[RMDB]
RNA sequence: GGGAACGACUCGAGUAGAGUCGAAAAGGAAAGUGUCAGGGCCAGUGUCGUGUUUUGUAAAUUUUGCCGCUGUUAGAACAGCUUUUCCAUUUCUUUUGCUCGCACAAUGGCAGCUUGCAUGGCACUGCCUUAGGCGGAAAUUCGUUUCCGCCUAAGGAAAAGAAACAACAACAACAAC
Reactivity to 2A3 in 0.01 (KOAc 150mM, MgCl2 10mM, bicine 150mM(pH8.5), 24C), signal-to-noise 3, nucleotides 027 to 126: g070g010a110a030a030g040u020g050u090c060a050g030g100g000c040c000a010g000u010g020u030c040g030u010g080u070u210u270u130g030u060a030a090a080u100u170u190u100g010c000c020g000c000u020g030u050u100a080g020a170a040c020a010g000c000u040u030u070u050c020c030a060u040u050u110c070u050u090u070u060g010c000u020c040g050c010a020c020a060a130u120g010g020c020a030g040c040u010u040g010c000a030u020g000g010c000a010c020u020g010
Reactivity to DMS in 0.01 (KOAc 150mM, MgCl2 10mM, bicine 150mM(pH8.5), 24C), signal-to-noise 4, nucleotides 027 to 126: g010g010a070a090a070g010u000g020u010c090a110g010g020g020c060c030a020g010u000g020u000c010g040u000g010u000u010u000u010g010u010a030a060a130u010u010u010u010g000c080c090g010c050u000g000u010u010a120g010a080a110c050a040g010c030u000u000u000u010c030c040a100u010u000u000c030u010u000u000u000g000c000u000c140g020c140a060c100a050a070u010g010g020c030a030g020c090u000u010g010c020a030u000g010g000c010a030c010u000g010